[RMDB]
RNA sequence: GGGAACGACUCGAGUAGAGUCGAAAAGGAUCCUAUGUACUCUUGGUAACUGCCAGUAGAUCAGUUACCAGUGAGGAGUACACUAUGUGUCAAUGAUCUACUGGUUGACAUAUAGAGAAUAGGAUCGCUACUGCAAUGUAUUCGUACAUUGCAGUAGAAAAGAAACAACAACAACAAC
Reactivity to DMS in 0.01 (KOAc 150mM, MgCl2 10mM, bicine 150mM(pH8.5), 24C), signal-to-noise 9, nucleotides 027 to 126: g000g000a010u000c000c000u010a020u000g010u000a040c000u000c000u010u010g010g000u000a020a040c010u000g000c190c060a190g020u010a090g010a100u000c010a010g010u000u000a020c000c020a020g010u000g020a130g000g010a060g000u000a030c010a200c000u000a020u010g020u000g000u000c030a010a030u000g010a110u000c130u010a080c180u000g010g000u000u000g000a020c020a030u000a030u000a010g000a100g010a200a080u000a000g000g000a010u000c000g000
Reactivity to 2A3 in 0.01 (KOAc 150mM, MgCl2 10mM, bicine 150mM(pH8.5), 24C), signal-to-noise 7, nucleotides 027 to 126: g030g000a000u000c000c000u010a020u050g030u020a050c010u010c040u080u040g030g000u030a040a030c010u010g010c020c020a090g040u050a030g050a170u060c000a000g020u010u010a000c000c010a000g000u030g080a080g080g030a010g030u040a010c020a000c000u030a030u060g060u010g010u000c020a010a020u030g020a110u040c020u100a080c050u060g070g000u000u000g010a000c000a010u060a010u010a020g050a000g040a030a030u020a010g000g000a000u000c000g000